[RMDB]
RNA sequence: GGGAACGACUCGAGUAGAGUCGAAAAGACAAGAUCUCCUUCUCUCCAACGUUGUUGCCAACUCAUGAUUCUCCUAACCUGUGCUUGGAGAGGCGUGGACCCAGAGUCAGAGGACCUCUGACUUCCAAAAACCCGUUUCGGUUCGCCGAAACGGGAACUAUUGAUCCUAGUUCGCUAGGAUCAAUAGAAAAGAAACAACAACAACAAC
Reactivity to DMS in 0.01 (KOAc 150mM, MgCl2 10mM, bicine 150mM(pH8.5), 24C), signal-to-noise 1, nucleotides 027 to 156: g030a110c090a080a070g000a300u000c060u010c010c010u000u000c010u000c020u000c010c030a080a140c090g000u000u000g010u000u000g000c020c030a060a100c040u040c030a050u010g020a040u000u000c010u000c020c020u000a060a080c020c060u020g010u000g020c060u030u000g060g010a040g010a040g000g030c040g040u000g000g000a170c020c020c030a200g010a030g040u010c010a050g010a020g020g000a240c260c040u000c010u000g000a040c010u000u000c040c020a000a080a090a120a100c010c000c000g020u000u000u000c000g000g010u000u000c290g030c020c000g010a000a000a000c010g020g060g000a000a010
Reactivity to 2A3 in 0.01 (KOAc 150mM, MgCl2 10mM, bicine 150mM(pH8.5), 24C), signal-to-noise 1, nucleotides 027 to 156: g070a030c080a070a130g030a230u080c050u000c050c030u110u000c020u000c010u000c020c020a060a050c050g000u010u010g020u010u020g020c010c040a050a040c070u050c010a110u070g030a160u110u020c040u110c050c040u050a040a050c020c080u110g070u110g090c070u010u020g020g000a020g000a000g040g000c030g010u040g000g030a020c000c010c050a050g010a000g060u020c010a000g010a000g060g140a120c020c060u010c020u000g000a000c000u060u040c040c000a020a050a010a050a070c010c000c000g020u000u000u000c030g060g050u000u070c190g000c090c000g010a020a000a000c010g000g000g020a000a000
Structure probing data (DMS and 2A3) for a 207-nucleotide construct. For 2A3, 840 sequencing reads were counted. 2A3 adducts were read by reverse transcription with SuperScript II with manganese. Reactivities are rounded to 0.1 and cut off at 0 and 3. For DMS, 2,227 sequencing reads were counted.